Chemical mapping of a 177-nucleotide RNA with DMS and 2A3. The DMS profile rests on 12,435 reads.
[RMDB]
RNA sequence: GGGAACGACUCGAGUAGAGUCGAAAAUUCGUCCAUGGCAGGACUGUGUCCAGGUCGCCGACGCCUGCCCAUUCGACAUAGCUGACUGCAAUGCAGCCCGUCAUCCCGCCCUCGAUCGCGGACAGAAGACUAUAUCGAGUUUCGACUCGAUAUAGUCAAAAGAAACAACAACAACAAC
Reactivity to DMS in 0.01 (KOAc 150mM, MgCl2 10mM, bicine 150mM(pH8.5), 24C), signal-to-noise 5, nucleotides 027 to 126: u020u020c090g010u010c010c020a060u030g000g030c040a080g010g000a100c030u000g030u030g010u010c060c040a120g010g010u000c060g020c040c060g000a070c100g020c050c010u010g010c040c020c040a120u020u040c100g020a090c060a060u020a090g010c030u010g010a120c020u000g010c070a100a090u000g000c050a060g000c020c030c040g020u010c070a100u020c020c020c020g000c030c020c010u000c070g000a050u010c070g000c050g000g010a080c090a050g000a120a080
Reactivity to 2A3 in 0.01 (KOAc 150mM, MgCl2 10mM, bicine 150mM(pH8.5), 24C), signal-to-noise 9, nucleotides 027 to 126: u080u050c030g030u020c020c020a080u080g050g000c030a030g020g050a060c060u090g050u020g020u090c020c030a050g040g030u050c030g020c060c000g010a020c040g010c000c000u030g010c000c020c010a050u110u120c040g030a030c040a060u110a040g020c020u030g110a160c030u050g030c050a030a110u160g010c010a010g030c000c020c010g030u030c010a060u050c000c000c010g030c020c010c000u040c030g070a100u060c030g010c030g050g020a010c020a030g190a180a020
Values cover nucleotides 27 to 126. For 2A3, 22,913 sequencing reads were counted.